[RMDB]
RNA sequence: GGGAACGACUCGAGUAGAGUCGAAAAUCCUGGGCCGCACGCGUGCUACACUGAUGAGUAGAAUGGGUUAAUACUGCAUUUAUUGCUUUCCCUUGACCGAGAGGUCUGGGUAAUCCUUUAAUACUCAUUCUGAAGGAUAGUUCGCUAUCCUUCAGAAAAAAGAAACAACAACAACAAC
Reactivity to DMS in 0.01 (KOAc 150mM, MgCl2 10mM, bicine 150mM(pH8.5), 24C), signal-to-noise 8, nucleotides 027 to 126: u010c000c000u000g000g010g020c020c020g010c070a060c130g020c060g010u010g020c040u000a070c120a090c110u010g010a090u000g010a020g020u000a010g000a090a100u000g000g010g010u000u000a050a140u030a080c140u000g000c000a020u000u020u010a090u060u000g000c000u000u000u010c140c000c010u010u020g000a000c000c010g000a220g010a220g010g000u000c000u000g000g000g000u010a020a020u000c010c000u000u010u010a070a140u000a010c010u010c010a060
Reactivity to 2A3 in 0.01 (KOAc 150mM, MgCl2 10mM, bicine 150mM(pH8.5), 24C), signal-to-noise 9, nucleotides 027 to 126: u020c000c000u010g010g020g000c000c010g060c020a050c040g060c020g060u110g020c010u060a050c070a020c080u130g050a050u020g000a020g010u010a000g040a100a070u060g010g010g010u030u030a050a040u080a190c050u050g010c010a030u050u140u150a200u300u140g000c010u020u050u070c000c000c000u030u190g000a000c010c000g010a010g010a030g060g010u000c000u010g000g000g010u010a000a020u010c000c000u040u040u050a080a040u020a010c000u000c010a020